[RMDB]
RNA sequence: GGGAACGACUCGAGUAGAGUCGAAAAUGACACCAAUAGGCUUGUCUAACAACCCACAAUGGUUACUUUUUCAAACCCAUUAAGGUGCGCGCAAGCGGAUCAAUUGAAUUGCAACGGACAACCGAAAGCGUAUUACGCACUUCGGUGCGUAAUACGCAAAAGAAACAACAACAACAAC
Reactivity to 2A3 in 0.01 (KOAc 150mM, MgCl2 10mM, bicine 150mM(pH8.5), 24C), signal-to-noise 1, nucleotides 027 to 126: u050g010a020c020a080c040c020a030a240u140a190g040g000c160u060u050g000u040c010u070a100a030c030a060a020c030c070c080a110c130a080a080u060g000g000u050u090a080c060u050u130u040u010u070c100a070a020a230c000c000c010a000u020u020a080a060g000g010u050g060c000g000c000g000c090a020a020g000c040g000g050a000u040c000a030a100u110u040g060a010a050u010u050g070c000a050a070c020g060g040a010c050a080a080c050c030g050a070a020a010